[RMDB]
RNA sequence: GGGAACGACUCGAGUAGAGUCGAAAAGAUAUGGAUGUAUAGCUAGCGUACUCGGAAACGAGACGCUUGGACCUAUCCCCCACAUCCUAAGUCAAAAGGCGCACUAAUGUUCGCAUUAGUGCGCCAAGAACCAGUUCUAGUUCGCUAGAACUGGUUCAAAAGAAACAACAACAACAAC
Reactivity to DMS in 0.01 (KOAc 150mM, MgCl2 10mM, bicine 150mM(pH8.5), 24C), signal-to-noise 2, nucleotides 027 to 126: g010a050u000a250u010g000g000a030u000g010u000a100u000a070g000c010u000a020g010c000g010u000a140c000u000c000g000g020a100a050a190c010g010a020g060a030c020g020c000u010u010g010g000a090c290c080u000a090u000c070c040c010c020c090a100c000a010u000c000c010u020a070a140g010u000c030a040a100a140a110g000g010c000g000c010a010c000u010a000a020u010g030u000u020c220g020c010a000u000u000a010g000u000g010c020g010c000c010a000a010

Chemical mapping of a 177-nucleotide RNA with DMS.
It was measured as part of the RMDB library TTRDEL.
The DMS profile rests on 1,200 reads.
Conditions: 150 mM KOAc, 10 mM MgCl2 and 150 mM bicine (pH 8.5), 24 C.